[RMDB]
RNA sequence: GGGAACGACUCGAGUAGAGUCGAAAAGGCGGCUUAGCGGAUUAGGCGUUGUUAUGCCCUAGUGGUCCUUACUCCAUGCAAAGCCUGCGUGCAGGCGGGGUAUUGUGCCGCGGGGACAACUGGUCGACCCAAUUACGUAGUUCGCUACGUAAUUGGGAAAAGAAACAACAACAACAAC
Reactivity to 2A3 in 0.01 (KOAc 150mM, MgCl2 10mM, bicine 150mM(pH8.5), 24C), signal-to-noise 2, nucleotides 027 to 126: g040g010c010g020g000c040u060u040a020g000c040g140g050a130u080u130a050g030g030c030g020u020u080g060u030u120a150u300g030c010c000c030u060a140g030u020g000g010u010c010c000u000u000a000c000u000c020c010a060u140g090c060a190a030a000g000c010c000u010g020c090g110u120g030c000a000g000g000c050g020g030g000g010u030a030u040u060g050u110g010c000c010g040c000g020g010g000g000a030c010a050a020c040u060g000g070u010c040g020a050
Reactivity to DMS in 0.01 (KOAc 150mM, MgCl2 10mM, bicine 150mM(pH8.5), 24C), signal-to-noise 2, nucleotides 027 to 126: g020g020c040g000g000c040u000u000a070g000c050g010g000a080u000u010a060g010g010c050g010u000u010g000u010u000a090u000g020c020c010c010u000a070g050u000g000g010u000c050c030u000u000a010c020u000c010c010a150u000g060c240a110a080a200g010c000c000u000g000c040g020u000g020c000a040g000g010c010g010g000g010g010u000a010u000u000g000u000g010c010c020g020c020g020g000g010g000a030c050a040a100c050u000g030g000u000c050g000a250